[RMDB]
RNA sequence: GGGAACGACUCGAGUAGAGUCGAAAAUGACCGCUGACCCCGAGCUGCGGUUCACCCCGUCCGGUGCGGCCGUGGCGAAUUUCACCGUGGCGUCAACGCCCCGGAUCUAUGACCGUCAGACCGGCGAGUGGUUUUAGGGAUUCGUCCCUAAAACCACAAAAGAAACAACAACAACAAC
Reactivity to DMS in 0.01 (KOAc 150mM, MgCl2 10mM, bicine 150mM(pH8.5), 24C), signal-to-noise 1, nucleotides 027 to 126: u000g000a020c010c020g000c020u010g010a130c210c040c000c080g000a140g000c000u000g030c010g000g040u070u050c290a070c000c000c050c110g000u000c000c050g000g000u030g000c030g020g010c000c050g000u000g000g000c080g000a050a080u010u070u000c090a090c010c000g060u000g000g000c020g000u000c250a100a300c000g000c000c020c030c050g000g020a060u000c070u000a120u000g000a030c130c000g090u000c000a080g000a120c110c010g000g000c050g000a110
Reactivity to 2A3 in 0.01 (KOAc 150mM, MgCl2 10mM, bicine 150mM(pH8.5), 24C), signal-to-noise 4, nucleotides 027 to 126: u100g020a040c000c020g000c050u070g040a130c000c030c000c040g040a070g010c020u020g010c020g020g030u030u060c020a090c000c000c010c000g060u040c030c000g000g010u010g000c030g000g040c000c050g020u020g020g000c060g040a100a140u130u190u270c070a060c020c020g020u060g020g020c010g130u230c120a210a160c010g000c000c020c020c010g000g000a000u000c010u050a070u140g050a040c000c000g030u120c030a040g060a140c030c000g010g020c060g040a030